The record gives the reactivity of an RNA of 177 nucleotides to DMS and 2A3.
Source: RMDB libraries RFM100 and RFMREP, as collected in RNAgym.
In probing experiments dimethyl sulfate is read out at A N1 and C N3, which are open when not base-paired.
RNA sequence: GGGAACGACUCGAGUAGAGUCGAAAAGGCAUUUACCAAUAUUUAUAAAUGCCACUGGGGAUUUUCUAAGUGAACAAAGAUAUGGAUGUUUGGGAAAGCAUCCACUUUGAGAAUUUACCAUAGAUAGAGGAAUUUAGAAAUUCGUUUCUAAAUUCCUAAAAGAAACAACAACAACAAC
Reactivity to DMS in 0.01 (KOAc 150mM, MgCl2 10mM, bicine 150mM(pH8.5), 24C), signal-to-noise 2, nucleotides 027 to 126: g020g020c000a000u000u020u000a070c090c080a120a150u080a120u040u040u040a180u000a050a000a000u000g010c000c000a080c150u010g000g000g020g000a030u010u000u010u000c000u000a060a160g010u000g020a130a200c060a030a040a050g010a220u040a080u020g000g010a030u000g000u000u000u010g010g050g000a110a020a030g010c010a000u000c000c000a010c000u010u010u010g000a020g000a120a060u000u000u010a030c010c010a050u000a070g010a140u020a070g000
Reactivity to 2A3 in 0.01 (KOAc 150mM, MgCl2 10mM, bicine 150mM(pH8.5), 24C), signal-to-noise 8, nucleotides 027 to 126: g010g000c000a010u020u010u030a070c030c010a120a080u130a170u230u250u070a090u030a060a010a010u000g000c000c000a010c050u010g000g020g010g010a010u010u020u020u000c010u050a040a030g030u040g140a110a060c070a100a140a040g110a110u200a120u170g010g010a000u010g030u040u060u050g130g030g020a070a050a000g000c000a000u000c000c000a000c000u000u000u010g010a010g010a010a000u030u040u090a230c000c010a040u080a080g090a060u080a040g140

The RNA was probed in 150 mM KOAc, 10 mM MgCl2 and 150 mM bicine (pH 8.5) at 24 C.